[RMDB]
RNA sequence: GGGAACGACUCGAGUAGAGUCGAAAAGUAAAGCUUAAGUCAAAAGUCGAUGGAUCAAUUGUUAUGACGAGAUGUGUCGGUGCGAAGAGAGGAUAUUCAACACGGAAUCAGGGUGUCCUAUUCCAGAGCUCGUCCUAUUAUUCGUAAUAGGACGAGCAAAAGAAACAACAACAACAAC
Reactivity to DMS in 0.01 (KOAc 150mM, MgCl2 10mM, bicine 150mM(pH8.5), 24C), signal-to-noise 2, nucleotides 027 to 126: g030u000a100a110a110g010c010u000u010a070a120g030u000c070a020a110a070a070g010u000c060g020a060u000g000g000a060u000c080a100a100u000u000g020u010u020a060u000g000a020c120g010a160g010a050u000g020u010g020u000c060g040g030u030g020c070g000a040a030g000a080g000a090g000g010a070u000a060u010u000c080a050a080c190a130c170g020g000a040a020u000c100a040g010g000g040u000g030u000c040c010u010a140u000u000c000c010a080g000a300
Reactivity to 2A3 in 0.01 (KOAc 150mM, MgCl2 10mM, bicine 150mM(pH8.5), 24C), signal-to-noise 1, nucleotides 027 to 126: g030u040a080a120a000g030c060u110u120a100a000g040u050c030a100a020a040a040g070u010c040g070a110u060g070g010a030u040c040a030a060u090u030g120u260u150a130u140g010a030c060g030a020g000a090u040g050u010g020u140c020g000g010u080g000c090g030a100a000g040a020g020a000g020g070a030u040a060u090u100c050a050a030c030a020c160g020g010a000a030u050c000a080g010g000g130u120g060u160c010c000u050a090u000u030c010c000a030g000a010